[RMDB]
RNA sequence: GGGAACGACUCGAGUAGAGUCGAAAAUAGAAGUCGCGAUAAAUGGGGGCCGGCGGAGCGGAGGGAGAUCCGAGCGGCGGCGGCAAGCUGGCUGCGAGCGGCUGAGCAGCACUCCAAGCUCGAACAAAGAUACUAAAUGAUUCGUCAUUUAGUAUCUAAAAGAAACAACAACAACAAC
Reactivity to DMS in 0.01 (KOAc 150mM, MgCl2 10mM, bicine 150mM(pH8.5), 24C), signal-to-noise 6, nucleotides 027 to 126: u010a110g010a120a070g020u000c040g020c030g010a100u010a050a100a100u000g000g000g010g000g020c050c050g020g000c050g010g010a090g010c050g000g000a090g010g000g010a110g000a080u000c060c020g010a050g020c020g010g010c130g010g000c070g010g020c050a050a060g010c030u000g000g010c030u000g010c040g000a090g010c040g010g000c030u000g000a060g010c020a070g010c030a210c040u010c010c030a070a170g010c040u000c010g000a080a060c210a080a080
Reactivity to 2A3 in 0.01 (KOAc 150mM, MgCl2 10mM, bicine 150mM(pH8.5), 24C), signal-to-noise 3, nucleotides 027 to 126: u140a010g110a100a020g030u040c020g020c020g090a060u070a140a190a090u120g020g000g000g030g030c030c020g000g040c020g010g030a060g010c020g010g040a040g010g020g000a070g000a040u030c030c010g000a010g010c010g050g000c010g030g010c000g000g010c010a030a010g020c020u040g060g000c000u010g030c020g010a030g020c040g020g000c010u000g000a010g000c000a000g010c010a050c050u000c010c010a020a010g010c020u000c020g020a040a010c040a040a140

An RNA of 177 nucleotides, treated with DMS and 2A3 and read out base by base. The reactions ran in a buffer of 150 mM KOAc, 10 mM MgCl2 and 150 mM bicine (pH 8.5), at 24 C. DMS adducts were read by reverse transcription with MarathonRT. For 2A3, 7,420 sequencing reads were counted.